[RMDB]
RNA sequence: GGGAACGACUCGAGUAGAGUCGAAAACACAUUCUAUUCGUAGAAUGUGGAACCUAGAGAGAUCGACAGCGUCGCAGCUAUGUCGAACGAGGAAGAGCGCGCAGGGAUCGGGCUUCGGCCCGAUCAACUUGUUUCAACUAUUCGUAGUUGAAACAAGAAAAGAAACAACAACAACAAC
Reactivity to 2A3 in 0.01 (KOAc 150mM, MgCl2 10mM, bicine 150mM(pH8.5), 24C), signal-to-noise 7, nucleotides 027 to 126: c000a000c000a000u000u000c010u020a030u070u070c160g110u040a000g000a010a010u000g000u010g000g010a020a030c000c000u090a050g040a010g010a000g020a220u030c020g020a020c010a020g010c020g080u170c110g000c090a070g000c030u110a090u250g020u020c010g030a060a060c040g040a040g050g050a070a050g020a010g060c050g000c030g000c050a050g120g080g000a000u000c000g010g000g000c010u060u090c230g070g000c020c000c010g000a000u000c000a000a020
Reactivity to DMS in 0.01 (KOAc 150mM, MgCl2 10mM, bicine 150mM(pH8.5), 24C), signal-to-noise 9, nucleotides 027 to 126: c000a000c000a010u000u000c000u000a020u000u010c170g020u000a010g000a010a000u000g010u000g000g000a080a130c010c000u000a060g010a150g010a140g000a090u000c020g010a020c010a050g010c020g010u000c250g010c160a140g000c020u000a060u000g010u000c010g010a020a120c100g010a110g010g000a050a040g000a040g000c040g010c070g020c140a090g010g010g000a010u000c000g000g000g010c000u000u010c200g030g000c000c000c000g000a000u000c010a050a100